[RMDB]
RNA sequence: GGGAACGACUCGAGUAGAGUCGAAAAAGCAUGCAAGUCGCACGUGCCCCGCAAGGGGAAAGUGGCGGACGGGUCAGUAACAGGAUCGAACGUACCCCGAGGUGGGGGAUAGCGGUGGGAAACUGCCAUCCAUCGCAGUUUUCGAACUGCGAUGGAUAAAAGAAACAACAACAACAAC
Reactivity to 2A3 in 0.01 (KOAc 150mM, MgCl2 10mM, bicine 150mM(pH8.5), 24C), signal-to-noise 2, nucleotides 027 to 126: a020g040c030a020u190g000c050a070a000g020u040c000g020c000a000c050g030u140g070c000c000c000c010g000c050a090a090g000g000g000g000a040a050a080g090u090g150g300c010g020g000a020c000g010g000g000u110c080a000g070u060a060a030c010a090g020g050a030u080c030g000a020a040c040g010u150a050c010c000c000c050g040a070g060g160u220g020g000g000g000g000a020u040a000g020c040g050g020u070g000g000g010a090a080a000c010u000g000c000c020
Reactivity to DMS in 0.01 (KOAc 150mM, MgCl2 10mM, bicine 150mM(pH8.5), 24C), signal-to-noise 3, nucleotides 027 to 126: a070g000c050a080u000g000c110a100a090g010u000c080g030c030a030c070g030u010g060c000c000c010c000g020c240a050a080g020g000g030g000a000a000a040g010u020g010g040c020g000g000a020c040g010g000g070u010c020a060g060u030a060a070c160a110g000g000a060u010c070g020a100a150c110g020u030a130c010c010c020c020g000a170g020g020u030g000g000g010g000g000a030u020a120g010c100g000g030u020g000g000g000a120a070a080c040u000g020c080c060
The record gives the reactivity of an RNA of 177 nucleotides to 2A3 and DMS. For 2A3 the reverse transcriptase was SuperScript II with manganese. Values cover nucleotides 27 to 126. Source: RMDB library RFM100, as collected in RNAgym. Conditions: 150 mM KOAc, 10 mM MgCl2 and 150 mM bicine (pH 8.5), 24 C.